RNA sequence: GGGAACGACUCGAGUAGAGUCGAAAAGCAGAUGGGGUGUGUCAGGACACUGAAUCUCGUAGGUAGUCAUCUUCCUGACAAGAUGUCCUAGCAAUUAAAGGUCUGUCAUUGCUAACUACCAUCGUACGAGAGUAUGACAGACACAUAUAUCUGAGGACACUUCAAUCUUCUUCGGAAGAUUGAAGUGAAAAGAAACAACAACAACAAC
Reactivity to DMS in 0.01 (KOAc 150mM, MgCl2 10mM, bicine 150mM(pH8.5), 24C), signal-to-noise 3, nucleotides 027 to 156: g010c010a070g020a030u000g000g030g030g050u000g010u000g010u010c020a080g010g020a120c120a100c050u030g030a120a070u000c020u000c030g020u000a120g000g040u000a070g020u010c040a070u000c010u010u000c010c010u000g010a070c010a040a110g030a070u010g000u010c090c070u010a070g010c050a040a090u000u010a050a100a170g000g010u000c040u020g010u010c160a080u000u010g040c010u000a060a090c020u000a020c000c010a170u010c180g020u000a040c050g020a100g020a060g030u000a020u000g010a090c010a080g010a040c000a040c080a030u000a120u000a050u000c000u000g000a080g000g020a240
Reactivity to 2A3 in 0.01 (KOAc 150mM, MgCl2 10mM, bicine 150mM(pH8.5), 24C), signal-to-noise 5, nucleotides 027 to 156: g070c030a010g010a070u070g020g030g020g010u040g010u010g010u020c010a010g000g030a030c040a010c120u080g040a060a070u020c020u010c030g030u060a050g000g020u020a020g040u040c020a030u010c030u060u020c020c040u030g020a010c000a010a010g060a040u070g030u030c020c040u030a010g030c030a030a020u080u090a170a060a040g060g020u020c020u030g020u010c010a010u020u120g000c000u020a030a040c010u010a020c020c030a080u160c130g080u060a030c040g010a000g000a000g060u050a020u030g010a010c000a020g020a010c000a000c000a010u150a010u040a030u060c060u080g070a040g070g030a010